[RMDB]
RNA sequence: GGGAACGACUCGAGUAGAGUCGAAAACUUGAUGGUUGGGUCCUAUUUCAAGGAGCGAUGCUCUGGUGUCGUGAAACGAUACAAUGAGAACGUGAAAUUCCAAGCAAAGAACAAACGACAAAGACAGAUGAAAUAGGUUCUUCGGAACCUAUUUCAUAAAAGAAACAACAACAACAAC
Reactivity to DMS in 0.01 (KOAc 150mM, MgCl2 10mM, bicine 150mM(pH8.5), 24C), signal-to-noise 4, nucleotides 027 to 126: c020u000u000g020a140u020g000g000u000u000g060g020g020u010c020c010u010a120u020u030u000c090a070a060g000g010a060g020c030g030a080u030g000c000u000c010u000g010g030u020g030u000c010g000u030g010a100a080a240c040g000a060u010a020c050a100a130u000g000a040g000a100a080c040g000u010g000a050a080a070u030u020c010c030a040a130g020c110a010a050a110g000a070a060c150a080a060a060c110g000a060c180a050a040a130g000a070c180a060g000
Reactivity to 2A3 in 0.01 (KOAc 150mM, MgCl2 10mM, bicine 150mM(pH8.5), 24C), signal-to-noise 5, nucleotides 027 to 126: c060u060u070g080a070u100g100g190u040u050g040g010g070u070c010c010u060a140u050u230u060c130a070a060g020g010a050g000c040g000a040u240g020c000u010c030u070g150g000u010g000u010c020g010u060g180a140a090a090c020g000a000u020a010c000a020a110u180g000a020g010a090a040c020g000u050g020a100a030a090u140u010c010c010a010a010g070c040a070a090a090g030a030a010c040a100a110a000c040g130a050c130a080a120a020g120a080c040a040g180